Chemical mapping of a 177-nucleotide RNA with 2A3 and DMS. Values cover nucleotides 27 to 126. The DMS profile rests on 1,159 reads.
RNA sequence: GGGAACGACUCGAGUAGAGUCGAAAAGGCGACCGUGAGCUCCGCUGGGCGCAGGCGUACUGGGAUGACCUUGAACUCCGCCGGCUAGGCGAAGACCGCCUAGCCGCUGCGGCGCUCCGCAGCUGCCGUGUCCUAGCCAAUUCGUUGGCUAGGACACAAAAGAAACAACAACAACAAC
Reactivity to 2A3 in 0.01 (KOAc 150mM, MgCl2 10mM, bicine 150mM(pH8.5), 24C), signal-to-noise 3, nucleotides 027 to 126: g020g000c020g040a090c010c000g090u140g100a000g010c030u030c030c010g000c020u080g040g060g050c080g000c050a090g010g060c030g050u050a110c070u060g040g000g070a100u300g130a210c000c000u020u040g050a050a010c010u020c010c000g000c010c000g010g000c000u020a000g000g000c010g040a070a020g130a110c040c030g020c000c000u000a000g040c000c020g000c020u010g000c020g000g000c000g000c000u040c020c020g000c040a050g020c010u040g030c000c010
Reactivity to DMS in 0.01 (KOAc 150mM, MgCl2 10mM, bicine 150mM(pH8.5), 24C), signal-to-noise 1, nucleotides 027 to 126: g000g000c000g020a010c220c020g050u030g000a050g030c040u010c090c020g030c000u000g000g000g050c050g030c130a020g000g020c050g080u060a220c070u010g020g000g040a050u000g000a180c000c000u000u000g000a130a070c180u000c020c080g000c050c000g020g000c040u000a080g010g110c000g000a210a170g040a170c250c040g000c000c000u000a000g060c000c080g000c080u010g040c030g000g000c120g000c060u010c070c040g060c050a300g000c160u040g000c090c050

Annotation:
The RNA was probed in 150 mM KOAc, 10 mM MgCl2 and 150 mM bicine (pH 8.5) at 24 C.